[RMDB]
RNA sequence: GGGAACGACUCGAGUAGAGUCGAAAAGAUAUGGACCAUCAAGUUGCGCUGCGACGAAGGCUCCCUUUGUUCGGAAACGAACAAAGGGAGCCAGAGCAGCGAACUACAACGUAGUGGUCCUAAGUCACAUAUAUGUCGUGUUCGCACGACAUAUAUGAAAAGAAACAACAACAACAAC
Reactivity to DMS in 0.01 (KOAc 150mM, MgCl2 10mM, bicine 150mM(pH8.5), 24C), signal-to-noise 3, nucleotides 027 to 126: g000a040u000a280u000g010g020a010c000c000a020u000c040a300a300g000u000u000g010c000g000c020u010g020c010g000a150c270g000a170a120g000g010c000u000c000c000c000u000u000u000g040u000u000c010g010g000a060a060a150c010g020a020a020c000a000a000a000g000g010g010a010g000c010c010a000g010a050g010c010a010g000c000g000a010a010c080u020a300c030a010a020c000g000u010a300g000u000g010g010u000c000c000u000a010a080g010u000c030a300
Reactivity to 2A3 in 0.01 (KOAc 150mM, MgCl2 10mM, bicine 150mM(pH8.5), 24C), signal-to-noise 1, nucleotides 027 to 126: g040a000u030a010u100g000g000a000c020c010a000u120c090a080a010g000u000u020g050c040g030c020u020g030c000g150a230c180g300a300a300g010g000c020u040c030c020c010u000u030u000g010u000u010c000g000g000a000a030a030c000g000a010a020c060a000a000a000g000g000g000a010g040c000c000a010g000a000g000c010a000g030c000g000a010a000c010u280a020c000a000a000c020g060u110a000g030u010g010g000u000c000c000u020a020a000g010u010c010a000
Source: RMDB library TTRINS, as collected in RNAgym. Structure probing data (DMS and 2A3) for a 177-nucleotide construct. For DMS, 4,244 sequencing reads were counted. Values are in units of 0.01, from 0 to 300, in steps of 10. The RNA was probed in 150 mM KOAc, 10 mM MgCl2 and 150 mM bicine (pH 8.5) at 24 C. Values cover nucleotides 27 to 126.